[RMDB]
RNA sequence: GGGAACGACUCGAGUAGAGUCGAAAAUCCUAAUCGUUCGCGAUUAGGAAAAUAAGGAAACCUUCGUGCUGGCGCCACUAAAUGAGUGCUCGCCCUCAUAAAAAACUCAGCUCUUCGGAGCUGAGAAGCUUAAUAAAUGCUUCGGCAUUUAUUAAGCAAAAGAAACAACAACAACAAC
Reactivity to 2A3 in 0.01 (KOAc 150mM, MgCl2 10mM, bicine 150mM(pH8.5), 24C), signal-to-noise 2, nucleotides 027 to 126: u010c000c000u010a000a010u010c000g040u060u050c220g010c000g100a000u000u010a010g010g000a000a020a020a100u160a050a050g120g010a060a040a050c030c000u100u130c100g050u010g050c050u040g010g010c010g030c000c040a030c040u120a080a250a300u240g050a070g030u030g000c040u000c030g040c000c020c000u030c030a060u200a000a250a000a050a020a020c000u000c000a020g000c010u000c000u000u140c280g080g000a000g020c000u020g000a000g010a000a000
Reactivity to DMS in 0.01 (KOAc 150mM, MgCl2 10mM, bicine 150mM(pH8.5), 24C), signal-to-noise 2, nucleotides 027 to 126: u000c000c000u000a000a020u000c000g020u010u020c200g030c020g020a000u000u000a000g000g000a000a020a090a110u010a060a120g000g000a150a150a130c040c020u010u000c060g000u020g000c030u020g020g030c080g030c300c010a040c070u000a030a090a150u000g010a090g020u010g010c060u020c040g000c020c000c040u040c060a110u000a000a060a080a060a090a110c000u020c000a000g000c000u000c000u000u020c180g010g020a020g000c000u000g000a020g000a010a040

Structure probing data (2A3 and DMS) for a 177-nucleotide construct.
In probing experiments dimethyl sulfate is read out at A N1 and C N3, which are open when not base-paired.
For DMS the reverse transcriptase was MarathonRT.
The data come from the RNA Mapping Database (RMDB), library M2PK50.
For 2A3 the reverse transcriptase was SuperScript II with manganese.